[RMDB]
RNA sequence: GGGAACGACUCGAGUAGAGUCGAAAAGCAGGGAGCCCAGGAUGCAAAGCUUGGUUUCUGAGCCCUGAUCAGGAGGCUGUGUUUAUAUUUAUCCUGCUAACUGCAGGGGACUGUUUAUUCCCAGAGAAAUAACCUCCUGGGCAGGAUAGGGGCAGCCCCUAAGUUAGGAGUUCGCUCCUAACUUAGGAAAAGAAACAACAACAACAAC
Reactivity to DMS in 0.01 (KOAc 150mM, MgCl2 10mM, bicine 150mM(pH8.5), 24C), signal-to-noise 2, nucleotides 027 to 156: g020c040a090g030g060g000a210g010c020c000c010a090g020g010a100u040g000c090a130a120a140g030c090u000u000g010g000u000u010u000c020u010g010a160g000c030c000c030u000g000a070u000c080a110g000g010a110g020g030c000u000g050u010g020u000u000u010a080u000a060u030u000u000a090u020c000c020u000g020c000u000a050a190c210u000g000c030a010g010g000g020g020a060c110u000g050u000u000u000a160u020u000c010c020c030a240g000a220g030a090a050a080u000a070a060c030c010u000c000c000u000g010g000g040c080a040g000g010a050u000a080g010g010g020g000c040a030g000c040c030
Reactivity to 2A3 in 0.01 (KOAc 150mM, MgCl2 10mM, bicine 150mM(pH8.5), 24C), signal-to-noise 2, nucleotides 027 to 156: g040c010a000g040g000g040a050g000c020c020c020a000g070g020a090u210g090c130a050a050a120g070c040u070u070g000g000u050u100u030c060u050g040a060g030c000c000c010u020g020a080u080c030a000g080g000a020g020g000c050u030g030u030g030u080u200u050a150u040a110u050u120u030a050u050c000c010u000g000c010u030a090a160c120u190g010c020a000g000g010g000g060a020c070u050g050u080u060u040a020u030u030c000c060c010a030g020a000g040a060a160a040u200a050a050c000c000u000c000c000u020g010g020g020c010a010g020g000a020u090a050g000g000g030g000c020a030g000c010c000

The data come from the RNA Mapping Database (RMDB), library OK3TST. Chemical mapping of a 207-nucleotide RNA with DMS and 2A3. Conditions: 150 mM KOAc, 10 mM MgCl2 and 150 mM bicine (pH 8.5), 24 C. For DMS the reverse transcriptase was MarathonRT. 2A3 adducts were read by reverse transcription with SuperScript II with manganese. For DMS, 2,798 sequencing reads were counted.